[RMDB]
RNA sequence: GGGAACGACUCGAGUAGAGUCGAAAAAUACAUACUGACACCGGUUGCUCAACAGGCUGUGUGGGACAAUAGAGUAACAAGGCUGUCAAUUUGAGCUUGACGGCUGCAAACCGAAUGGAGUGAAAUCGUAACCGGACUCACUUCGGUGAGUCCGGAAGGUGUCUAUAUACUUCGGUAUAUAGACACCAAAAGAAACAACAACAACAAC
Reactivity to 2A3 in 0.01 (KOAc 150mM, MgCl2 10mM, bicine 150mM(pH8.5), 24C), signal-to-noise 2, nucleotides 027 to 156: a000u120a010c040a020u140a050c030u050g080a020c020a020c040c030g050g010u030u070g020c030u050c060a080a090c030a120g100g000c040u030g040u050g000u020g070g050g020a010c040a010a020u090a040g040a040g030u030a070a010c050a090a070g030g000c070u010g020u000c000a000a000u010u000u210g060a040g030c000u000u020g020a020c030g020g000c010u070g010c010a040a040a020c050c000g090a070a030u110g050g010a040g020u120g060a040a060a070u130c080g000u050a070a060c000c000g000g000a000c000u000c000a010c000u020u040c070g030g000u010g000a000g000u000c000c000g000g000a000a000
Reactivity to DMS in 0.01 (KOAc 150mM, MgCl2 10mM, bicine 150mM(pH8.5), 24C), signal-to-noise 1, nucleotides 027 to 156: a100u000a050c030a060u000a070c070u010g010a080c030a090c040c030g040g000u000u000g010c020u000c070a110a130c060a120g010g000c010u010g010u000g000u020g050g000g000a030c050a060a130u000a140g000a080g010u000a040a060c050a080a140g010g010c010u000g020u000c010a040a040u000u010u010g000a100g070c230u000u000g000a080c000g000g070c030u000g000c040a060a150a070c060c010g010a060a130u000g030g000a090g060u000g000a060a040a060u000c050g000u000a090a200c000c000g000g010a060c000u020c000a050c040u020u000c300g050g010u000g000a010g010u000c000c000g010g010a000a010